RNA sequence: GGGAACGACUCGAGUAGAGUCGAAAAAAGAAAUUGUUGGUGAGCGCCAACUAUUACUUGUGUGGGAGGCUGGCAAGUCCAAACCACCACUCAAUCGUAAUUAUGUUUUUACUGGUUAUCAUAUAACAAACAUAUACCUUCGGGUAUAUGAAAAGAAACAACAACAACAAC
Reactivity to DMS in 0.01 (KOAc 150mM, MgCl2 10mM, bicine 150mM(pH8.5), 24C), signal-to-noise 3, nucleotides 027 to 129: a040a040g060a020a030a020u030u020g010u000u040g020g030u040g040a050g020c170g000c010c000a000a030c070u030a040u020u010a040c030u030u020g010u030g020u030g000g000g060a060g090g010c110u010g040g000c090a190a160g020u080c000c030a020a110a140c050c040a200c000c010a050c030u020c030a050a060u070c120g010u000a010a000u030u070a050u070g030u000u000u000u000u000a090c210u060g010g030u000u000a120u000c050a040u000a050u110a150a130c060a030a040a050
Reactivity to 2A3 in 0.01 (KOAc 150mM, MgCl2 10mM, bicine 150mM(pH8.5), 24C), signal-to-noise 7, nucleotides 027 to 129: a000a000g180a000a050a030u120u050g010u000u000g030g010u060g010a030g060c090g030c040c000a010a000c000u010a020u000u010a000c020u000u000g000u000g000u010g020g050g020a220g050g000c020u000g010g000c090a190a070g050u090c000c000a030a020a040c000c000a010c000c000a000c000u020c010a020a080u110c110g020u010a020a000u060u080a120u120g150u020u050u020u100u070a110c060u020g040g070u040u070a110u070c080a030u120a000u050a210a050c020a020a040a010
Structure probing data (DMS and 2A3) for a 170-nucleotide construct. For DMS, 11,125 sequencing reads were counted.